[RMDB]
RNA sequence: GGGAACGACUCGAGUAGAGUCGAAAACCGCUGUACUGGCGGCUAAAAUGGUUCGUGAGUCUGCUGGCUGCCCGCUGUGCCAGCGCUCAUGGGCGGAGGUACAGAAGGAUGCAGAGGACAAGGCUGCGUGGAGAUAUUGGUUCGCCAAUAUCUCCACAAAAGAAACAACAACAACAAC
Reactivity to 2A3 in 0.01 (KOAc 150mM, MgCl2 10mM, bicine 150mM(pH8.5), 24C), signal-to-noise 1, nucleotides 027 to 126: c000c010g000c020u050g000u070a050c030u060g080g030c060g020g060c070u060a010a000a090a290u240g070g000u020u010c020g010u010g040a010g030u070c180u240g010c000u010g040g000c020u090g070c070c010c000g100c090u150g040u060g060c000c010a020g030c020g030c010u000c020a020u020g000g010g000c000g040g040a000g000g020u040a030c000a010g020a070a080g080g000a050u160g050c000a000g050a020g020g030a050c070a080a170g110g020c020u020g010c010
Reactivity to DMS in 0.01 (KOAc 150mM, MgCl2 10mM, bicine 150mM(pH8.5), 24C), signal-to-noise 2, nucleotides 027 to 126: c010c000g010c030u000g000u000a020c060u000g000g010c030g000g030c110u010a030a060a060a080u010g000g020u000u010c000g010u000g010a020g000u000c120u000g040c010u010g000g010c010u010g010c090c030c080g010c100u010g000u000g010c000c000a070g030c000g000c000u000c000a010u000g010g000g000c010g010g010a150g000g040u000a020c010a030g010a100a120g040g010a120u000g000c030a020g000a160g000g010a080c140a070a100g000g000c010u000g000c060